An RNA of 207 nucleotides, treated with DMS and 2A3 and read out base by base. 2A3 adducts were read by reverse transcription with SuperScript II with manganese. Values are in units of 0.01, from 0 to 300, in steps of 10. High 2A3 reactivity points to a flexible backbone, as in loops and unpaired stretches. The reactions ran in a buffer of 150 mM KOAc, 10 mM MgCl2 and 150 mM bicine (pH 8.5), at 24 C. It was measured as part of the RMDB library M2RFPK.
[RMDB]
RNA sequence: GGGAACGACUCGAGUAGAGUCGAAAACUUAACUGGUCAGAUAAGAAAAGACCGAGAGGUUCAAGCUUAUAGGGCAGAAAGCGGGGGACAGCAGUACUAAACAUUCCCUGUGGCUGAGACGAAGGUAAAAAGGGUCAUAACUUCGGUUAUGACCCAAUCUUAACCAUUUGUUCGCAAAUGGUUAAGAAAAAGAAACAACAACAACAAC
Reactivity to DMS in 0.01 (KOAc 150mM, MgCl2 10mM, bicine 150mM(pH8.5), 24C), signal-to-noise 2, nucleotides 027 to 156: c040u020u030a090a110c060u020g000g040u020c000a300g010a170u000a060a050g000a080a120a190a200g000a050c000c040g000a140g010a190g010g000u000u000c010a070a180g020c040u010u000a040u000a080g020g000g030c080a110g030a060a030a080g040c080g020g000g000g010g020a070c050a040g000c020a060g020u000a200c070u000a050a070a090c030a130u000u000c000c000c020u000g030u000g020g040c030u000g000a140g000a110c040g010a070a070g010g010u010a010a050a080a090a030g000g030g020u000c000a010u000a000a010c010u000u020c280g020g030u000u010a000u000g000a030c030c000c000a010a010
Reactivity to 2A3 in 0.01 (KOAc 150mM, MgCl2 10mM, bicine 150mM(pH8.5), 24C), signal-to-noise 2, nucleotides 027 to 156: c010u050u070a020a040c020u040g010g050u010c010a050g030a230u190a300a020g060a080a110a010a030g020a040c000c030g020a020g020a020g090g040u060u100c070a050a030g010c000u040u070a020u130a260g030g010g030c020a020g070a050a070a000g050c090g000g010g000g000g000a000c020a020g010c020a010g020u040a050c060u140a020a160a020c010a040u040u090c010c000c030u030g020u020g030g000c040u050g010a000g010a010c070g010a050a000g050g010u080a060a070a000a050a000g030g000g000u000c000a000u000a000a000c000u030u040c160g090g000u000u000a010u000g000a000c000c000c000a000a000